[RMDB]
RNA sequence: GGGAACGACUCGAGUAGAGUCGAAAAGAAGGCUGAGAACAAGCUGAACUACCAGUUGAACAAUGAUGCCUAUGCGUCGUUGAACGACUUCUACGAAGCUCUCGGAAUUCCCCAUAUUUCAAUGGGUGAAGAACUCGGUUGGCGAUCUGGUCGAAUGGUAUUCGUAACGUUUCGACGUUACGAAUACAAAAGAAACAACAACAACAAC
Reactivity to 2A3 in 0.01 (KOAc 150mM, MgCl2 10mM, bicine 150mM(pH8.5), 24C), signal-to-noise 1, nucleotides 027 to 156: g110a050a010g070g000c010u020g030a020g050a220a050c150a050a000g070c000u040g010a060a030c000u020a090c060c080a010g000u010u020g020a020a000c020a040a030u040g010a000u020g000c010c110u300a110u270g020c060g000u030c000g000u000u030g010a030a030c010g000a030c000u090u040c020u080a030c040g070a030a020g000c010u000c030u030c110g040g030a040a040u040u000c000c000c000c010a070u150a100u120u300u050c060a090a030u020g000g030g000u150g050a000a030g040a060a000c040u010c120g070g000u020u050g090g000c000g070a080u020c050u070g060g050u040c060g090a030a060u180g060
Reactivity to DMS in 0.01 (KOAc 150mM, MgCl2 10mM, bicine 150mM(pH8.5), 24C), signal-to-noise 1, nucleotides 027 to 156: g000a080a040g000g010c000u020g000a090g010a090a080c060a080a130g000c040u020g000a140a130c160u000a080c060c030a030g000u000u010g010a050a300c000a100a030u010g000a050u000g020c000c130u010a200u000g020c000g060u010c000g050u000u000g030a010a300c000g000a010c010u000u010c020u020a060c030g000a300a050g040c020u000c030u000c050g030g000a080a160u000u000c020c000c000c020a040u000a190u020u000u010c180a070a030u020g000g020g040u000g050a010a050g030a040a060c010u000c070g040g000u000u000g000g000c070g030a120u000c070u000g020g000u010c010g000a120a060u000g010